[RMDB]
RNA sequence: GGGAACGACUCGAGUAGAGUCGAAAAAAAAUAUCACACGUGCAUUAAAUAUUGCUAAAGCUGUACGUACAGGACGUAUUUGGAUUAACACUUACAACCAAGUACCAGAAGGCGCACCAUUUGGUGGGGAUCUAACAGUCUUCGGACUGUUAGAUCCAAAAGAAACAACAACAACAAC
Reactivity to DMS in 0.01 (KOAc 150mM, MgCl2 10mM, bicine 150mM(pH8.5), 24C), signal-to-noise 1, nucleotides 027 to 126: a050a010a010a040u000a050u000c080a130c080a000c060g000u000g000c070a070u030u020a050a050a050u000a080u050u000g000c080u000a170a080a100g000c060u000g000u000a060c170g000u000a130c070a120g000g000a030c300g040u030a000u000u000u000g000g000a100u000u000a010a060c150a100c210u000u000a100c060a080a170c060c040a010a000g000u000a000c000c110a100g020a000a250g000g000c070g040c010a000c000c030a130u030u000u000g000g030u000g000g000
Reactivity to 2A3 in 0.01 (KOAc 150mM, MgCl2 10mM, bicine 150mM(pH8.5), 24C), signal-to-noise 2, nucleotides 027 to 126: a000a000a000a000u230a080u090c070a040c000a000c050g010u010g000c020a050u120u200a100a070a140u190a000u100u280g010c010u050a040a040a040g050c050u040g000u000a000c040g000u030a020c110a020g020g100a000c040g000u000a060u000u000u050g180g000a170u000u170a190a070c060a010c110u110u120a060c010a000a000c000c000a000a100g040u030a000c000c000a100g040a160a020g200g010c120g010c010a000c020c000a040u050u070u230g120g000u010g030g090